[RMDB]
RNA sequence: GGGAACGACUCGAGUAGAGUCGAAAAUACAUGGAGGAAAUGCCAUGGCGGUGGAUGUACGUCCAUCGAGCCGGUUUGAUGAUUAUUUCCCUGAUUAUCAAUUUGGCUGCGGAUGAUCAUACUCCUCAAUAGGUGUCUACUUCGGUAGACACCUAUUAAAAGAAACAACAACAACAAC
Reactivity to DMS in 0.01 (KOAc 150mM, MgCl2 10mM, bicine 150mM(pH8.5), 24C), signal-to-noise 3, nucleotides 027 to 126: u030a110c120a050u000g010g000a020g010g000a070a100a090u120g000c050c000a050u010g010g010c110g010g010u000g000g000a020u020g000u010a040c200g010u000c010c000a010u000c010g000a070g010c000c000g010g000u010u000u010g000a010u000g010a010u000u000a030u010u010u000c010c020c010u000g000a010u000u000a000u000c010a000a000u000u000u010g030g020c000u000g000c050g010g010a040u000g000a100u000c060a090u000a130c030u000c000c000u000c100
Reactivity to 2A3 in 0.01 (KOAc 150mM, MgCl2 10mM, bicine 150mM(pH8.5), 24C), signal-to-noise 5, nucleotides 027 to 126: u270a020c160a110u090g020g000a020g030g150a060a060a040u130g020c040c030a100u110g140g000c030g000g010u010g000g000a030u050g110u300a060c220g000u000c000c010a010u010c010g000a020g000c000c000g000g010u010u020u090g010a020u000g000a000u000u010a020u030u040u000c000c000c000u000g010a010u020u020a010u010c010a020a010u010u000u180g030g000c050u120g090c060g080g020a050u110g040a010u110c020a010u070a160c030u010c000c000u030c000